RNA sequence: GGGAACGACUCGAGUAGAGUCGAAAAUUGAGCGGAUUCGAAAGGAUCUCCUUACUAUGGAUGUUGGUGAAAUAACUUUAAGCGACCCGUCUUGAAACACGGACCAAGGAGUCUAACAUGCUUGCGACUCGUCAGGUACUUUCGAGUACCUGACGAGAAAAGAAACAACAACAACAAC
Reactivity to 2A3 in 0.01 (KOAc 150mM, MgCl2 10mM, bicine 150mM(pH8.5), 24C), signal-to-noise 2, nucleotides 027 to 126: u300u280g040a000g000c020g000g010a010u000u160c020g060a060a210a000g030g000a000u000c050u120c030c030u050u060a070c120u050a130u130g050g010a100u050g020u010u000g020g000u000g050a070a110a100u290a060a020c010u040u080u040a090a000g050c000g010a070c000c000c050g020u000c010u000u140g050a000a000a000c000a000c050g000g080a030c000c000a050a010g170g070a200g050u010c020u020a030a140c030a050u120g000c030u040u070g120c010g000a120
Reactivity to DMS in 0.01 (KOAc 150mM, MgCl2 10mM, bicine 150mM(pH8.5), 24C), signal-to-noise 1, nucleotides 027 to 126: u000u030g000a000g030c160g060g000a050u000u000c000g000a200a030a300g000g000a010u080c000u000c190c000u000u000a000c130u040a000u130g000g000a000u050g030u000u000g000g000u020g000a240a090a160u000a100a000c010u050u000u000a060a230g000c300g000a050c000c000c000g000u030c030u000u000g000a040a080a040c140a010c080g000g010a040c050c010a080a180g000g000a010g000u000c090u000a090a050c300a110u040g050c070u000u000g000c020g000a150